[RMDB]
RNA sequence: GGGAACGACUCGAGUAGAGUCGAAAACCUCACUACAUUUUACUGUUCCUAAAGAAUUUGUGACAGGUACAGUAAAACGUAUUGCAAGGUUUAUCAGUUCCUAUAAACAGGGAAAUAACAAUAUAUGAAAAGCAAAGACUGUUCGCAGUCUUUGCAACGGUUCAUAUGGGUUCGCCCAUAUGAACCGAAAAGAAACAACAACAACAAC
Reactivity to 2A3 in 0.01 (KOAc 150mM, MgCl2 10mM, bicine 150mM(pH8.5), 24C), signal-to-noise 3, nucleotides 027 to 156: c000c000u010c000a020c000u010a000c000a030u000u010u000u000a000c000u010g020u040u030c000c000u090a120a150a110g170a290a300u240u250u250g220u130g080a080c100a080g000g010u000a000c010a010g000u000a000a000a000a010c010g000u000a000u020u030g030c040a040a020g030g000u040u040u030a150u070c010a030g010u020u000c000c000u030a070u180a100a060a010c070a040g020g030g050a040a090a030u210a090a040c030a110a000u100a010u070a050u240g120a090a070a030a010g000c010a000a000a000g000a000c000u020g030u020u070c160g010c040a000g000u000c000u000u000u010g010c000a000a000
This 207-nucleotide RNA was probed chemically with 2A3.
The reactions ran in a buffer of 150 mM KOAc, 10 mM MgCl2 and 150 mM bicine (pH 8.5), at 24 C.
For 2A3 the reverse transcriptase was SuperScript II with manganese.